RNA sequence: GGGAACGACUCGAGUAGAGUCGAAAAGAUAUGGAGGAGAAACUGAAUCGUGGGAGCAACAGCCCACGGUGGUCGGAAACGACCAUUGGGACAUGCUCCGCACGAUUCAGUUUCUCCUCCUAAGUCAUCAAAUAUGUUACUUCGGUAACAUAUUUGAAAAAGAAACAACAACAACAAC
Reactivity to DMS in 0.01 (KOAc 150mM, MgCl2 10mM, bicine 150mM(pH8.5), 24C), signal-to-noise 6, nucleotides 027 to 126: g000a060u010a300u000g010g000a010g000g020a020g000a000a020a000c000u000g000a010a010u000c000g060u000g030g020g010a040g000c010a040a080c300a230g020c000c000c010a090c300g020g020u000g000g000u000c000g000g000a120a120a270c010g010a010c000c000a000u000u000g000g010g000a030c070a240u000g000c010u000c000c000g000c000a010c000g010a000u010u000c000a000g000u000u000u000c000u010c000c010u000c000c000u000a010a050g010u010c030a210